[RMDB]
RNA sequence: GGGAACGACUCGAGUAGAGUCGAAAACUAGCGACGUGCAAUACUUCAGUUUCAAAUUUACCCCCCAUGACAAAGAAAUAGCAAGUGCAUCUCCGUUGCUUUACAAUCCCCAGAGGUUUAAAUGGGAUACAUGCCCAAGUAUCACAACAUACGGGAACCAAUUGUGGUAAUUCGUUACCACAAUUGGAAAAGAAACAACAACAACAAC
Reactivity to DMS in 0.01 (KOAc 150mM, MgCl2 10mM, bicine 150mM(pH8.5), 24C), signal-to-noise 1, nucleotides 027 to 156: c010u000a050g020c010g000a020c040g050u000g000c060a100a100u000a010c040u020u000c010a200g000u000u000u000c080a050a040a200u000u000u000a300c030c030c030c010c000c050a110u000g000a190c090a110a050a080g010a050a060a040u010a110g010c070a080a000g040u000g000c020a060u020c020u010c030c010g000u000u000g020c050u000u000u000a050c090a060a180u010c000c010c010c030a040g000a100g000g000u000u000u010a020a110a150u020g020g000g000a040u000a020c000a070u010g050c100c020c030a120a070g000u000a020u000c010a040c090a030a120c020a100u000a070c000g000g010g000a080a240
Reactivity to 2A3 in 0.01 (KOAc 150mM, MgCl2 10mM, bicine 150mM(pH8.5), 24C), signal-to-noise 2, nucleotides 027 to 156: c030u020a040g000c010g020a000c010g030u080g100c080a010a100u060a140c050u050u040c030a070g060u040u050u060c150a150a150a300u270u300u300a300c050c020c000c020c040c000a070u020g030a030c070a060a130a020g050a010a040a010u100a020g010c070a030a020g000u010g010c010a050u050c030u010c040c000g040u020u010g000c000u030u020u070a060c070a070a080u100c010c000c000c010a070g110a040g150g060u010u060u170a020a090a020u110g020g040g000a010u010a070c030a030u180g050c000c000c000a040a010g010u010a020u050c030a020c020a200a000c000a040u130a070c010g030g010g010a010a010